RNA sequence: GGGAACGACUCGAGUAGAGUCGAAAAGAUAUGGAACUACAAAAACUCCCCAUGAUAGCAACAGCUUGUGGUUCGGAAACGAACCCAAGACAUGCUAAUAUGGGGAGUUUUUGUAGUUCCUAAGUCAUCAAUGAAGAAGGUUCGCCUUCUUCAUUGAAAAAGAAACAACAACAACAAC
Reactivity to DMS in 0.01 (KOAc 150mM, MgCl2 10mM, bicine 150mM(pH8.5), 24C), signal-to-noise 3, nucleotides 027 to 126: g010a030u010a300u010g000g000a020a010c000u000a020c000a020a000a020a020a010c000u010c000c010c000c010a020u000g010a100u010a010g010c010a040a070c300a220g000c010u010u000g000u000g040g010u000u000c000g000g000a140a090a190c000g010a010a020c000c010c020a000a010g000a030c100a220u000g000c000u010a000a080u020a020u010g000g030g000g010a000g010u000u000u000u000u000g010u000a000g000u000u000c010c000u000a000a020g010u000c040a220